[RMDB]
RNA sequence: GGGAACGACUCGAGUAGAGUCGAAAAUGAUGGGAUUUUACCAUGUUGGCCAGGCUGGUCUUGAACUCUUGACCUCAGGUGAUCCACCUGUCUCGGCCUCCCAAGGUGUUGGGAUUAUAGGUGCCUAUAGCAGAUGAUAAUUCGUUAUCAUCUGCUAAAAAGAAACAACAACAACAAC
Reactivity to DMS in 0.01 (KOAc 150mM, MgCl2 10mM, bicine 150mM(pH8.5), 24C), signal-to-noise 9, nucleotides 027 to 126: u000g010a040u000g010g000g000a180u010u000u010u010a090c010c010a050u000g010u010u000g010g010c010c020a050g010g010c140u010g010g000u000c040u000u010g010a130a100c090u000c030u010u000g010a080c070c070u000c070a040g000g010u000g000a080u010c090c110a060c010c010u000g010u010c020u000c110g020g000c010c020u000c010c010c020a060a070g010g020u000g010u000u000g010g000g010a100u000u010a080u010a070g010g010u000g010c060c030u000a160
Reactivity to 2A3 in 0.01 (KOAc 150mM, MgCl2 10mM, bicine 150mM(pH8.5), 24C), signal-to-noise 4, nucleotides 027 to 126: u230g030a020u050g020g030g040a050u030u170u070u100a080c020c020a040u090g070u090u090g080g000c020c020a020g040g020c070u060g000g000u030c000u070u100g090a180a120c050u030c000u220u040g040a040c000c020u060c020a000g020g020u020g050a150u060c070c000a010c010c030u020g030u040c020u010c070g030g000c010c000u000c010c000c010a020a020g160g010u140g080u100u060g020g010g010a030u070u070a130u150a120g120g000u040g040c010c000u100a090